[RMDB]
RNA sequence: GGGAACGACUCGAGUAGAGUCGAAAAACAUCGAGGCUAAAGGAAGAAGAGAGAGAGUACAGCCUUAGUUCAGAUCACAUAUGACUAUCUUUUGCGAGUCUGAUCGAUACUCUGAUGAAGGCUGUACCUUAAUAAGGUUCUUCGGAACCUUAUUAAGAAAAGAAACAACAACAACAAC
Reactivity to 2A3 in 0.01 (KOAc 150mM, MgCl2 10mM, bicine 150mM(pH8.5), 24C), signal-to-noise 9, nucleotides 027 to 126: a000c030a060u090c050g020a030g030g010c040u070a080a050a030g050g020a020a050g020a080a010g040a020g010a000g000a000g000a010g020u000a000c000a000g000c000c000u040u030a040g050u050u020c010a000g010a020u050c020a020c020a110u160a060u210g010a010c010u040a070u200c060u090u290u170u250g090c110g010a000g010u000c010u040g030a040u080c020g010a010u040a120c040u020c020u050g020a030u030g030a010a010g000g000c000u000g000u000a000c000
Reactivity to DMS in 0.01 (KOAc 150mM, MgCl2 10mM, bicine 150mM(pH8.5), 24C), signal-to-noise 9, nucleotides 027 to 126: a080c090a060u010c070g010a100g000g010c080u000a050a080a080g000g010a060a050g010a070a050g000a060g010a080g010a100g010a160g020u000a010c000a010g010c000c000u000u000a100g010u000u000c020a020g000a030u000c090a080c170a080u000a070u000g010a060c040u000a080u010c050u000u000u010u010g020c160g000a030g000u000c010u000g000a060u010c110g000a100u010a090c220u000c040u000g000a040u020g000a030a030g000g000c000u000g000u000a000c020